[RMDB]
Overview:
An RNA of 177 nucleotides, treated with 2A3 and read out base by base. For 2A3 the reverse transcriptase was SuperScript II with manganese.

RNA sequence: GGGAACGACUCGAGUAGAGUCGAAAAUUAAGCAUACGCAACGUCUUGGGGAGACGUUGAUGAGUUAUCAAUACUUGUACGUUAAUGAGCCUGUAAUGUACGAGUUCGUCUGCAGAGUGGCUCGGGAAUGCAGCAGGACGUUCGCGUCCUGCUGCAUAAAAGAAACAACAACAACAAC
Reactivity to 2A3 in 0.01 (KOAc 150mM, MgCl2 10mM, bicine 150mM(pH8.5), 24C), signal-to-noise 1, nucleotides 027 to 126: u050u040a030a030g000c000a000u020a040c010g000c020a010a000c000g000u000c000u090u150g000g000g030g010a020g000a000c000g020u000u010g010a010u040g010a010g130u170u120a250u190c080a080a010u000a060c000u040u000g000u000a000c000g000u020u010a030a020u110g020a000g030c020c030u080g130u140a030a010u040g000u010a020c020g000a050g000u000u000c000g010u030c020u020g010c020a030g010a100g180u070g060g000c000u000c050g000g020g050a080
Conditions: 150 mM KOAc, 10 mM MgCl2 and 150 mM bicine (pH 8.5), 24 C.